[RMDB]
RNA sequence: GGGAACGACUCGAGUAGAGUCGAAAAAGCAUCAUUGUGCCGAGAUAUUUAUAUCAUUACAAUUGAUUAUCUGUUUCUUCCGGUGUUUUCGGUGUUUCAGAUGUCACUGGUUGAUUUUUAAUUGUAGGGACGUACUACUAUUCGUAGUAGUACGUCCAAAAGAAACAACAACAACAAC
Reactivity to 2A3 in 0.01 (KOAc 150mM, MgCl2 10mM, bicine 150mM(pH8.5), 24C), signal-to-noise 2, nucleotides 027 to 126: a020g020c030a020u050c010a050u060u300g050u050g020c020c040g120a110g030a090u080a170u120u270u080a210u050a010u090c010a010u010u190a050c020a000a070u040u060g000a000u020u180a000u100c030u040g220u080u080u020c040u130u000c000c020g000g010u030g100u060u040u160u080c000g000g010u060g050u050u050u030c010a030g000a010u030g090u080c000a010c030u050g100g000u060u030g060a040u090u040u000u060u100a060a100u000u060g040u030a030g020
Reactivity to DMS in 0.01 (KOAc 150mM, MgCl2 10mM, bicine 150mM(pH8.5), 24C), signal-to-noise 1, nucleotides 027 to 126: a040g010c080a020u010c100a080u000u000g000u000g010c080c070g000a100g010a060u000a030u010u020u010a070u000a060u030c020a090u000u000a050c010a010a030u000u000g000a020u010u000a020u000c040u000g000u010u000u010c140u010u000c020c030g000g000u000g020u000u000u000u000c030g020g020u010g010u010u010u000c010a100g000a020u000g000u010c020a030c050u010g010g000u000u000g000a020u000u010u000u000u010a010a080u000u000g020u000a050g020